[RMDB]
RNA sequence: GGGAACGACUCGAGUAGAGUCGAAAAGCAUCUGCUGCAUGUAUAGUAGGGGAAGAGGUCCGCUCCCGACCACGGCAACUGGCCCCCGUGGCAGUUGGCCCGCCGUCUUAAGGAGAAUCUGUGCGGCAUUACGCGAGUGAUUCGUCACUCGCGUAAUAAAAGAAACAACAACAACAAC
Reactivity to DMS in 0.01 (KOAc 150mM, MgCl2 10mM, bicine 150mM(pH8.5), 24C), signal-to-noise 5, nucleotides 027 to 126: g000c080a040u010c050u010g000c000u000g050c020a050u000g020u020a040u020a080g020u010a090g010g000g000g020a050a050g000a120g000g010u000c040c040g020c030u000c010c000c080g010a100c110c150a230c250g010g010c030a040a070c020u000g010g010c030c000c070c120c160g010u030g000g000c030a030g000u000u010g010g010c020c020c060g010c100c110g010u000c020u020u010a100a080g010g010a130g000a090a080u000c040u000g000u010g010c010g020g010c040
Reactivity to 2A3 in 0.01 (KOAc 150mM, MgCl2 10mM, bicine 150mM(pH8.5), 24C), signal-to-noise 5, nucleotides 027 to 126: g030c010a040u050c030u070g020c020u030g000c050a050u090g150u130a130u050a200g170u060a080g030g000g000g080a090a040g050a050g040g040u030c010c020g030c030u020c000c000c000g000a010c000c010a010c010g040g000c050a040a050c030u060g240g030c000c000c020c030c060g030u220g000g000c020a020g020u040u040g120g080c020c000c020g010c000c000g020u030c030u080u080a080a050g040g000a060g030a040a060u080c030u020g030u050g010c010g000g000c020

An RNA of 177 nucleotides, treated with DMS and 2A3 and read out base by base.
Source: RMDB library OK1LIB, as collected in RNAgym.
For DMS, 8,855 sequencing reads were counted.
The 2A3 profile rests on 3,552 reads.
2A3 adducts were read by reverse transcription with SuperScript II with manganese.
The reactions ran in a buffer of 150 mM KOAc, 10 mM MgCl2 and 150 mM bicine (pH 8.5), at 24 C.
DMS adducts were read by reverse transcription with MarathonRT.